[RMDB]
RNA sequence: GGGAACGACUCGAGUAGAGUCGAAAAAUCCUCAGGUUCAUAAGCGUGAUGAUUGGGUGUUCAUGCUCCAUGCAUGACAUGUGCCUCCUUUGAACCUUGUUACGACCUUGGCACAUUACCCAACUGAAAAAGACGUUCGCGUUCGCGCGAACGUCAAGUAUCGUUGAGCGUUCGCGCUCAACGAUACAAAAGAAACAACAACAACAAC
Reactivity to 2A3 in 0.01 (KOAc 150mM, MgCl2 10mM, bicine 150mM(pH8.5), 24C), signal-to-noise 2, nucleotides 027 to 156: a000u010c000c000u020c010a000g020g000u010u000c000a000u080a210a040g060c130g100u140g080a100u040g020a090u090u080g040g000g000u080g070u110u010c000a000u000g000c000u040c180c150a110u250g000c000a000u000g000a000c000a030u000g000u000g000c000c000u040c000c000u000u000u000g000a000a000c000c000u000u060g070u090u140a190c170g000a050c020c070u050u110g000g000c000a010c000a000u020u120a030c010c000c020a010a000c060u080g020a100a100a030a020a080g000a000c000g000u020u010c000g010c000g040u050u060c140g000c000g000c000g100a000a000c020g000u000c000a000a000